[RMDB]
RNA sequence: GGGAACGACUCGAGUAGAGUCGAAAAAGCUCCUGUUUCGACAGGAGCUGUGUGGCUGCCCUAUUGUGCUCGAUGUAGAGUGCUUUCCUGCCGGAAAGGGCUUGAGAGCUUGAUUCGUCAAGCUCAAUCAGACGGUGAAGUUCGCUUCACCGUCUGAAAAAGAAACAACAACAACAAC
Reactivity to DMS in 0.01 (KOAc 150mM, MgCl2 10mM, bicine 150mM(pH8.5), 24C), signal-to-noise 2, nucleotides 027 to 126: a020g000c000u000c000c000u000g000u000u000u000c220g010a040c000a000g000g000a010g020c010u000g010u010g030u000g020g020c080u000g010c020c000c010u000a110u010u010g020u000g000c030u000c020g020a150u020g020u020a090g010a040g010u000g010c020u000u000u000c000c020u000g020c130c090g030g000a040a080a040g010g000g040c050u010u010g000a180g000a020g010c000u000u010g000a030u000u010c140g030u000c000a000a000g000c010u000c000a040a090
Notes
Conditions: 150 mM KOAc, 10 mM MgCl2 and 150 mM bicine (pH 8.5), 24 C. Chemical mapping of a 177-nucleotide RNA with DMS. The DMS profile rests on 2,083 reads. The data come from the RNA Mapping Database (RMDB), library M2PK50.